[RMDB]
RNA sequence: GGGAACGACUCGAGUAGAGUCGAAAACGUCACUGUCUGGCUGCUUGGAACGCAUCUCUGUCUACGCACUCUCUUCGCCACAGACUGUCUCUCUCUAUGCGAAGAAGCGUCUGUGGGGAAAUGCGACCGCGACGUCCGUAUUCGUACGGACGUCGCGAAAAGAAACAACAACAACAAC
Reactivity to 2A3 in 0.01 (KOAc 150mM, MgCl2 10mM, bicine 150mM(pH8.5), 24C), signal-to-noise 2, nucleotides 027 to 126: c040g050u050c020a020c070u030g020u110c020u040g040g020c010u060g020c020u010u080g060g000a040a080c010g000c030a090u000c020u000c000u020g060u040c080u050a050c070g010c020a050c000u050c000u000c020u080u000c070g150c150c000a000c000a010g000a000c020u080g180u070c000u000c000u000c000u000c040u030a150u230g180c040g010a140a040g050a040a000g020c000g010u000c000u000g000u020g000g000g010g010a000a050a000u080g010c000g020a020c060
The record gives the reactivity of an RNA of 177 nucleotides to 2A3. The 2A3 profile rests on 1,162 reads. Conditions: 150 mM KOAc, 10 mM MgCl2 and 150 mM bicine (pH 8.5), 24 C.